The record gives the reactivity of an RNA of 170 nucleotides to DMS. It was measured as part of the RMDB library 15KLIB. Conditions: 150 mM KOAc, 10 mM MgCl2 and 150 mM bicine (pH 8.5), 24 C. DMS adducts were read by reverse transcription with MarathonRT.
[RMDB]
RNA sequence: GGGAACGACUCGAGUAGAGUCGAAAAUAAAAGAAGUUGCACCUGUCUAUGAGGCUGAUACCGAACAGACACAGAAUGUUACUGUUAAACCUAAGAGGUUACGCAAAAAGCGUAAUGUUGACCCUUUAUCAGAGGGGCUUCGGCCCCUCUAAAAGAAACAACAACAACAAC
Reactivity to DMS in 0.01 (KOAc 150mM, MgCl2 10mM, bicine 150mM(pH8.5), 24C), signal-to-noise 2, nucleotides 027 to 129: u010a040a000a060a090g030a120a050g000u010u010g000c100a110c050c100u050g030u060c000u040a030u030g030a200g020g070c090u060g020a150u040a180c040c060g000a160a030c050a000g000a000c270a140c130a020g080a110a070u020g030u000u080a000c120u000g100u100u030a110a000a060c040c110u070a190a170g010a150g000g060u110u010a000c010g000c040a040a010a100a150a000g050c080g080u040a100a000u090g010u010u000g000a060c230c100c000u030u000u030a180u000c140